[RMDB]
RNA sequence: GGGAACGACUCGAGUAGAGUCGAAAAGUAGUUAUGCUGAAAAUCGUUGAGGUUGUAGGGAAUAGGUUAACCGUAAGACCUUAAGUUGAAAAACUUUAAAAUUAAUCUCAGGUAAAUUACUUUGAGUAAAACCUUCGUCGUUUCGACGACGAAGGAACUACACCACUUUGUUCGCAAAGUGGUGUAGAAAAGAAACAACAACAACAAC
Reactivity to 2A3 in 0.01 (KOAc 150mM, MgCl2 10mM, bicine 150mM(pH8.5), 24C), signal-to-noise 2, nucleotides 027 to 156: g040u050a020g000u090u070a130u300g050c010u060g030a000a000a050a090u140c040g040u040u070g000a000g000g040u000u020g020u080a050g010g010g030a070a170u090a070g010g080u090u070a090a000c010c000g070u050a040a050g020a000c020c000u010u000a030a020g000u030u010g060a100a100a010a000a000c040u200u190u110a030a120a080a110u000u160a050a060u040c020u010c050a000g000g040u040a070a300a150u030u030a050c010u220u160u120g020a020g010u090a030a130a030a020c020c000u000u010c000g020u000c000g000u040u000u070c160g080a010c000g010a000c000g010a000a000g000g000a000a000
An RNA of 207 nucleotides, treated with 2A3 and read out base by base.
The reactions ran in a buffer of 150 mM KOAc, 10 mM MgCl2 and 150 mM bicine (pH 8.5), at 24 C.
For 2A3, 652 sequencing reads were counted.